[RMDB]
RNA sequence: GGGAACGACUCGAGUAGAGUCGAAAAGGCAUAUUGACAGGCUGUUUUAGUUUUGCCAAGAUGUUAUUUAUGCUUCCACUAGCUUACUUUAGUGAUUCAAAACUCGGCACCACAGAGGUUAAAGUGAGUAUAGAGAUUGGUUCGCCAAUCUCUAUACAAAAGAAACAACAACAACAAC
Reactivity to DMS in 0.01 (KOAc 150mM, MgCl2 10mM, bicine 150mM(pH8.5), 24C), signal-to-noise 4, nucleotides 027 to 126: g000g000c000a010u000a060u000u010g010a000c010a030g000g010c010u000g010u010u020u020u010a040g010u000u000u010u010g020c010c010a060a040g010a070u000g000u000u000a060u010u000u000a070u020g020c060u010u010c040c010a070c100u000a090g010c050u000u010a060c070u010u000u000a060g020u000g010a130u010u000c070a070a070a100a090c100u000c040g010g000c080a050c060c040a040c070a130g000a040g000g000u010u000a030a050a060g020u000g010a170
Reactivity to 2A3 in 0.01 (KOAc 150mM, MgCl2 10mM, bicine 150mM(pH8.5), 24C), signal-to-noise 3, nucleotides 027 to 126: g030g000c010a000u000a010u020u020g010a000c030a030g030g000c020u030g100u110u140u080u140a080g040u070u080u220u100g000c000c000a030a040g100a110u060g010u010u020a100u030u090u010a030u020g010c000u040u030c010c010a030c030u010a030g030c000u040u080a040c010u110u130u010a030g030u060g090a100u050u090c070a050a070a030a080c010u000c050g030g010c030a020c000c020a030c020a040g040a020g040g060u060u070a040a000a010g040u040g020a040